[RMDB]
RNA sequence: GGGAACGACUCGAGUAGAGUCGAAAAGGGACCCUGCGCCGGGUCGAGCAGCGGCGCGGGUUUGGCGACGCGGGUCAGCCGCUCGCUCAGGAUGGCGCGCGCCCCGCGCACGAUGGCGAGCUGGGCGUAGUUAUGCUCAUUUCGAUGAGCAUAACUAAAAAGAAACAACAACAACAAC
Reactivity to DMS in 0.01 (KOAc 150mM, MgCl2 10mM, bicine 150mM(pH8.5), 24C), signal-to-noise 8, nucleotides 027 to 126: g010g010g000a100c020c000c010u000g020c010g010c010c010g000g010g010u000c050g010a070g020c040a070g010c060g010g000c010g020c020g010g000g010u000u000u000g010g010c100g010a070c080g010c030g000g000g010u010c130a150g000c010c020g010c020u000c080g000c020u010c050a090g010g010a160u010g000g010c000g010c010g000c070g000c070c030c030c050g000c010g010c020a050c050g000a120u010g010g000c020g010a060g010c020u000g010g010g010c030g020
Reactivity to 2A3 in 0.01 (KOAc 150mM, MgCl2 10mM, bicine 150mM(pH8.5), 24C), signal-to-noise 5, nucleotides 027 to 126: g030g020g050a040c000c000c050u070g010c010g010c000c010g050g010g070u080c050g000a040g010c020a010g040c010g030g000c020g000c020g020g030g000u060u040u050g080g000c050g010a050c040g010c020g090g030g070u200c050a040g060c020c010g000c000u030c050g000c010u040c020a020g100g020a130u130g040g000c040g000c000g000c020g000c060c020c000c020g000c010g000c010a020c040g120a120u160g060g030c040g020a030g020c040u090g030g020g000c010g000